[RMDB]
RNA sequence: GGGAACGACUCGAGUAGAGUCGAAAAUCGCUUGUGUUUGUGCACAACCUGCCGGCACACACGAACGUGACGGUCCGUGACUCGACGAUUGUGACGCCGGGACCGAUGCGCUACUCGCAGCUGAGCAUACGUAAAUAUCCUUCGGGAUAUUUACGUAAAAAGAAACAACAACAACAAC
Reactivity to 2A3 in 0.01 (KOAc 150mM, MgCl2 10mM, bicine 150mM(pH8.5), 24C), signal-to-noise 8, nucleotides 027 to 126: u070c020g020c050u070u060g020u010g050u100u110u160g100u110g020c020a020c020a060a090c010c040u110g090c020c010g010g000c010a020c000a010c000a000c050g030a080a010c030g030u050g140a050c030g030g020u000c040c100g170u160g060a040c030u030c110g070a060c020g090a180u060u130g040u050g050a040c060g010c000c000g020g010g010a020c000c050g040a080u060g010c020g000c020u070a050c010u020c040g020c030a030g020c030u070g020a020g040c040a060
Reactivity to DMS in 0.01 (KOAc 150mM, MgCl2 10mM, bicine 150mM(pH8.5), 24C), signal-to-noise 9, nucleotides 027 to 126: u010c040g010c090u000u010g020u000g010u000u010u000g040u000g020c010a040c070a100a090c150c110u000g020c020c030g000g000c010a100c070a100c030a030c040g010a020a090c030g010u000g010a170c140g000g010u010c020c140g000u010g010a080c050u000c050g010a080c040g000a140u010u010g010u000g000a160c120g010c020c010g000g000g000a040c070c040g000a100u000g000c040g010c030u000a030c040u000c020g020c090a050g010c030u000g000a110g010c120a180